[RMDB]
RNA sequence: GGGAACGACUCGAGUAGAGUCGAAAACUCCACCUUGGAGUGCCUAUUCGGAGCACUGCAGUUCCCGAUAGAAAGGCUAAGCACCUCGCAAUGACGUAAGGUGGGACUUUUCCCUCGGGUUUGAGCGCAAGAAAGUUAGGUUCGCCUAACUUUCUUGAAAAGAAACAACAACAACAAC
Reactivity to DMS in 0.01 (KOAc 150mM, MgCl2 10mM, bicine 150mM(pH8.5), 24C), signal-to-noise 6, nucleotides 027 to 126: c090u000c000c010a090c190c100u000u000g010g010a060g020u000g010c020c010u000a090u010u000c220g010g000a100g010c030a050c060u000g010c080a120g010u010u000c010c000c010g010a050u000a040g000a040a060a030g010g010c040u010a090a120g010c060a080c020c010u000c060g020c030a130a110u010g010a110c170g000u000a040a030g000g010u000g010g000g010a070c050u000u000u000u000c010c020c090u010c040g010g000g010u000u000u000g010a120g020c120g010
Reactivity to 2A3 in 0.01 (KOAc 150mM, MgCl2 10mM, bicine 150mM(pH8.5), 24C), signal-to-noise 4, nucleotides 027 to 126: c010u000c010c000a070c020c060u070u130g070g060a030g040u010g000c000c010u080a210u070u170c090g080g020a120g030c050a020c100u170g070c050a060g000u050u050c000c000c010g000a000u010a040g090a020a100a000g060g020c060u050a130a010g110c010a040c010c000u020c020g010c030a120a300u250g070a160c040g050u090a040a000g010g000u000g000g030g010a020c000u030u000u050u030c000c000c000u000c000g010g000g000u020u090u150g090a070g040c060g000

Record summary:
Conditions: 150 mM KOAc, 10 mM MgCl2 and 150 mM bicine (pH 8.5), 24 C. Chemical mapping of a 177-nucleotide RNA with DMS and 2A3. The DMS profile rests on 6,510 reads. 2A3 is a SHAPE reagent: it acylates the 2'-hydroxyl of flexible nucleotides of all four kinds. The data come from the RNA Mapping Database (RMDB), library VIROID.